[RMDB]
RNA sequence: GGGAACGACUCGAGUAGAGUCGAAAAUGGAACCGCAGUUGGUUCCUCGGAACUAAACUCGUGGUUCCUGUGGUUCACACCUGACCUCCUGAGCAGAAAAGAAAAAAGAAGGCGGCUCGGAGGAGCGCACUAGUGAAUGGUUCGCCAUUCACUAGUGAAAAGAAACAACAACAACAAC
Reactivity to 2A3 in 0.01 (KOAc 150mM, MgCl2 10mM, bicine 150mM(pH8.5), 24C), signal-to-noise 3, nucleotides 027 to 126: u040g000g000a000a020c000c000g010c010a000g000u020u020g020g000u020u010c000c000u000c090g060g010a010a010c020u130a260a060a030c010u100c150g000u020g000g000u000u000c000c000u010g040u030g020g040u100u110c070a050c010a040c110c020u080g080a140c000c000u020c000c030u130g000a000g000c020a020g110a100a170a080a010g150a060a280a020a060a040a010g090a110a020g090g070c090g050g000c010u000c010g000g010a010g000g020a010g030c090g000
Reactivity to DMS in 0.01 (KOAc 150mM, MgCl2 10mM, bicine 150mM(pH8.5), 24C), signal-to-noise 4, nucleotides 027 to 126: u000g000g010a000a000c000c010g020c020a020g000u000u010g010g000u000u000c000c010u020c240g000g000a030a000c000u000a030a030a030c000u000c150g040u000g000g010u000u000c010c000u000g010u010g010g030u000u000c090a100c120a120c050c030u010g000a180c010c010u000c010c000u020g010a060g020c020a110g010a070a050a110a130g000a020a060a060a130a110a140g010a140a070g020g010c130g010g010c000u000c020g010g010a050g020g000a050g000c160g010